The record gives the reactivity of an RNA of 207 nucleotides to DMS and 2A3. It was measured as part of the RMDB library OK3TST. DMS adducts were read by reverse transcription with MarathonRT. For 2A3, 1,378 sequencing reads were counted.
RNA sequence: GGGAACGACUCGAGUAGAGUCGAAAAUGUGUGGAAGGAAUGGAAUUUAUUUGGGUGUGGUUGAAGCAUGAAACAUCUGUGGUGGUUACCCAGAGGGGAACAUCGAAUUGUUAUUCACACGCCUGCUGUUCAUAGCAUAUAGCUCCUAGAAGGUGGAGGUCCAGUAUUAGUUCGCUAAUACUGGACCAAAAGAAACAACAACAACAAC
Reactivity to DMS in 0.01 (KOAc 150mM, MgCl2 10mM, bicine 150mM(pH8.5), 24C), signal-to-noise 1, nucleotides 027 to 156: u020g040u000g000u020g000g020a090a130g010g000a060a060u000g000g000a120a140u000u000u000a090u020u000u000g010g000g030u000g010u000g020g010u000u000g010a080a120g000c040a080u020g000a140a070a080c050a030u000c060u030g000u010g000g020u000g030g020u020u000a050c060c040c010a160g020a060g060g020g020g020a050a050c040a060u010c030g020a060a070u010u000g000u010u000a140u000u000c010a110c080a090c040g010c030c010u000g010c030u000g020u000u000c050a150u000a120g000c030a100u000a100u000a170g000c010u010c010c030u000a040g010a060a050g050g040u010g010g010a190
Reactivity to 2A3 in 0.01 (KOAc 150mM, MgCl2 10mM, bicine 150mM(pH8.5), 24C), signal-to-noise 3, nucleotides 027 to 156: u120g050u000g010u050g030g040a040a040g060g020a080a030u080g050g030a040a060u090u150u100a200u120u140u270g040g000g000u050g020u020g020g090u020u060g010a040a030g040c060a030u090g050a050a130a020c040a050u050c030u060g060u080g030g020u020g010g060u070u100a070c010c010c010a050g030a040g080g030g000g010a010a020c010a060u080c040g020a100a030u080u060g010u060u090a050u110u030c060a030c000a000c070g040c020c040u080g000c030u010g020u060u040c040a040u100a070g000c010a000u050a000u020a150g000c010u000c000c010u020a050g040a080a010g030g050u070g010g030a060